An RNA of 177 nucleotides, treated with DMS and 2A3 and read out base by base.
It was measured as part of the RMDB library RFMREP.
In probing experiments dimethyl sulfate is read out at A N1 and C N3, which are open when not base-paired.
For DMS the reverse transcriptase was MarathonRT.
As a SHAPE reagent, 2A3 marks flexible, mostly unpaired nucleotides at the ribose 2'-OH.

RNA sequence: GGGAACGACUCGAGUAGAGUCGAAAAAUGAGUUGCACACUGGUGGAGCCAUGGUAUCAGGUGAUACAGGCACCACUCAGUAUCACCCUGGUGACAAAAUCAAGUGCACAGGGGCCAUCUGACUCACCUUAGAGUAUGUCUUCGGACAUACUCUAAGAAAAGAAACAACAACAACAAC
Reactivity to DMS in 0.01 (KOAc 150mM, MgCl2 10mM, bicine 150mM(pH8.5), 24C), signal-to-noise 5, nucleotides 027 to 126: a080u010g000a030g010u000u000g030c180a100c170a060c020u010g010g000u000g000g000a100g040c000c000a110u000g020g010u000a020u000c010a300g020g010u000g010a010u000a010c020a130g000g000c010a080c010c010a010c000u000c010a010g020u000a080u010c110a150c010c010c010u000g010g010u000g010a080c040a050a040a070a170u010c280a060a090g020u000g010c010a050c040a060g000g000g010g010c110c100a070u010c150u010g000a040c020u000c020a070c200
Reactivity to 2A3 in 0.01 (KOAc 150mM, MgCl2 10mM, bicine 150mM(pH8.5), 24C), signal-to-noise 6, nucleotides 027 to 126: a000u070g000a010g010u040u080g060c070a040c010a000c100u010g000g000u000g020g000a020g000c030c030a160u220g180g020u020a010u020c030a080g240g280u300g200a000u000a000c010a020g000g000c010a010c000c010a000c000u080c000a000g000u010a060u040c040a090c000c010c000u060g170g010u070g070a080c040a020a160a020a140u130c060a140a130g070u070g180c020a000c010a020g020g000g000g000c030c020a110u110c070u120g000a010c000u000c010a060c000